[RMDB]
RNA sequence: GGGAACGACUCGAGUAGAGUCGAAAAAUUAGGCGGCUUGAAAGGACUCCUACUUCAUCAGGUGGUGUGGGGACCAACUAGCCUUGCCCGAGGGAUACCACCGGAACGACUUGGGAGAGUCACUGGCUGUUGUGAGACUAUUCGUAGUCUCACAACAAAAAGAAACAACAACAACAAC
Reactivity to DMS in 0.01 (KOAc 150mM, MgCl2 10mM, bicine 150mM(pH8.5), 24C), signal-to-noise 3, nucleotides 027 to 126: a110u020u000a080g030g000c030g030g010c050u010u000g010a060a110a130g000g000a070c050u010c010c010u000a060c050u000u000c050a070u010c140a100g020g010u000g020g010u010g010u000g030g020g010g010a140c110c060a040a170c090u000a060g000c030c030u010u010g010c020c020c030g000a010g020g010g010a140u000a050c030c010a070c020c010g010g010a060a120c130g000a050c060u000u010g020g030g020a120g000a090g000u000c040a070c050u000g000g030c170
Reactivity to 2A3 in 0.01 (KOAc 150mM, MgCl2 10mM, bicine 150mM(pH8.5), 24C), signal-to-noise 1, nucleotides 027 to 126: a010u190u110a050g090g000c010g010g040c070u040u110g120a130a060a030g110g000a040c030u050c040c000u010a030c010u070u030c010a230u050c020a090g210g000u050g010g030u050g040u040g020g030g010g000a000c000c000a030a050c000u060a040g030c000c070u020u110g040c030c000c010g000a070g000g080g000a050u070a110c000c000a000c000c040g010g000a130a080c090g030a010c030u010u050g050g020g000a100g020a020g070u040c000a020c100u040g020g040c060
Source: RMDB library OK2TRN, as collected in RNAgym. An RNA of 177 nucleotides, treated with DMS and 2A3 and read out base by base. Reactivities are given for positions 27 through 126. The reactions ran in a buffer of 150 mM KOAc, 10 mM MgCl2 and 150 mM bicine (pH 8.5), at 24 C. For DMS the reverse transcriptase was MarathonRT. For DMS, 2,085 sequencing reads were counted. Values are in units of 0.01, from 0 to 300, in steps of 10.